[RMDB]
RNA sequence: GGGAACGACUCGAGUAGAGUCGAAAAAUUAUGCGAUAUAUGCGAUAUAUAUACGCUAUGCGGCGAUAGCGAUAGCGUAUGCGCGCGCGGCGUAUGCGGCGUAUCGCAUACGCAUAUAUUAUCGCGCUAUCGUCUGGUCGUUCGCGACCAGACGAUAAAAAGAAACAACAACAACAAC
Reactivity to DMS in 0.01 (KOAc 150mM, MgCl2 10mM, bicine 150mM(pH8.5), 24C), signal-to-noise 1, nucleotides 027 to 126: a110u000u000a030u000g010c000g000a070u000a070u000a050u010g000c100g010a130u010a040u010a100u000a020u000a170c030g000c010u000a010u020g020c000g030g020c010g000a060u010a040g020c020g020a100u000a110g010c020g000u000a000u000g010c050g010c300g010c040g020c050g010g020c020g000u020a060u020g000c060g010g020c110g000u000a040u000c010g000c000a020u010a010c000g010c010a140u000a020u010a070u000u010a000u020c020g020c020g030c130